Chemical mapping of a 207-nucleotide RNA with DMS and 2A3. It was measured as part of the RMDB library OK3TST. For DMS, 3,646 sequencing reads were counted. For 2A3 the reverse transcriptase was SuperScript II with manganese. The RNA was probed in 150 mM KOAc, 10 mM MgCl2 and 150 mM bicine (pH 8.5) at 24 C.

RNA sequence: GGGAACGACUCGAGUAGAGUCGAAAAUGAGGCUUCUGCGCGGUGGGCGUCUGUUACUGGCGAGUCUAUUGACUCGGUGGCGUCUAAGUUUGAGGCAAUCGGAAAAGACCCGCUCCAAGCCAUUGAAUCGGGUCAAAUCCGAGUAACUGAGGCUCAGGAGUAGAUACAGAUUCGUCUGUAUCUACUCAAAAGAAACAACAACAACAAC
Reactivity to DMS in 0.01 (KOAc 150mM, MgCl2 10mM, bicine 150mM(pH8.5), 24C), signal-to-noise 2, nucleotides 027 to 156: u010g000a110g020g000c010u010u000c030u000g020c060g020c040g030g050u010g030g000g020c040g050u000c020u010g000u010u000a110c030u000g020g020c050g020a040g060u010c010u010a040u000u020g010a030c010u000c010g050g040u010g030g010c030g010u000c030u000a040a130g010u000u000u000g010a250g040g020c010a050a050u000c050g040g000a050a050a130a300g000a060c000c000c050g000c190u000c010c020a030a010g040c210c130a130u010u010g000a030a050u000c000g020g020g010u010c080a010a080a250u000c000c010g010a030g000u000a080a070c060u000g000a160g030g000c020u030c060a170g010
Reactivity to 2A3 in 0.01 (KOAc 150mM, MgCl2 10mM, bicine 150mM(pH8.5), 24C), signal-to-noise 3, nucleotides 027 to 156: u100g010a040g050g030c030u070u000c050u100g050c080g000c060g060g040u060g010g000g010c020g020u030c030u090g170u110u140a150c070u080g130g050c020g010a010g000u010c010u070a300u110u300g010a010c000u000c010g060g080u010g000g000c010g020u000c010u010a090a020g030u040u110u170g050a020g020g010c030a030a090u020c010g000g020a000a070a010a040g000a000c000c000c000g000c000u040c050c020a080a090g090c060c080a080u040u090g010a020a020u050c010g000g000g000u000c010a050a050a000u000c000c000g000a000g020u000a010a000c020u030g010a010g050g040c010u010c000a010g110